[RMDB]
Notes:
The record gives the reactivity of an RNA of 177 nucleotides to DMS and 2A3.
RNA sequence: GGGAACGACUCGAGUAGAGUCGAAAAAGCGCCUCUACGGAGGCGCAAUUUGUUUUAGCCUGAGCUAUGUGUUAUUGCACAUACAUAGCUACUUGUUAAAACAUACCAGCGUCCGUACGCGGACGCAAUUAGAAUCAACAUUCGUGUUGAUUCUAAUAAAAGAAACAACAACAACAAC
Reactivity to DMS in 0.01 (KOAc 150mM, MgCl2 10mM, bicine 150mM(pH8.5), 24C), signal-to-noise 7, nucleotides 027 to 126: a200g000c010g010c010c000u000c010u000a110c160g030g000a010g020g040c000g010c010a000a000u000u000u000g010u000u000u000u000a000g000c000c030u000g000a060g000c010u000a000u000g020u000g010u000u010a090u020u030g020c300a090c150a010u010a010c000a000u000a000g000c000u000a070c000u000u010g000u000u000a000a000a010a000c000a020u010a120c020c020a150g010c000g010u010c000c000g020u020a100c240g020c030g010g000a010c000g010c000a010
Reactivity to 2A3 in 0.01 (KOAc 150mM, MgCl2 10mM, bicine 150mM(pH8.5), 24C), signal-to-noise 9, nucleotides 027 to 126: a000g010c010g000c050c010u010c010u030a090c290g100g000a000g000g000c000g000c000a000a000u000u000u020g000u000u000u000u000a000g010c000c000u000g010a000g000c010u000a000u000g050u000g050u060u050a190u220u300g070c080a080c010a070u040a010c000a000u000a000g000c000u070a280c000u010u010g000u000u010a000a000a000a000c010a010u040a040c010c020a020g000c000g000u000c010c000g010u040a040c260g000c010g100g000a000c000g000c000a000
2A3 adducts were read by reverse transcription with SuperScript II with manganese.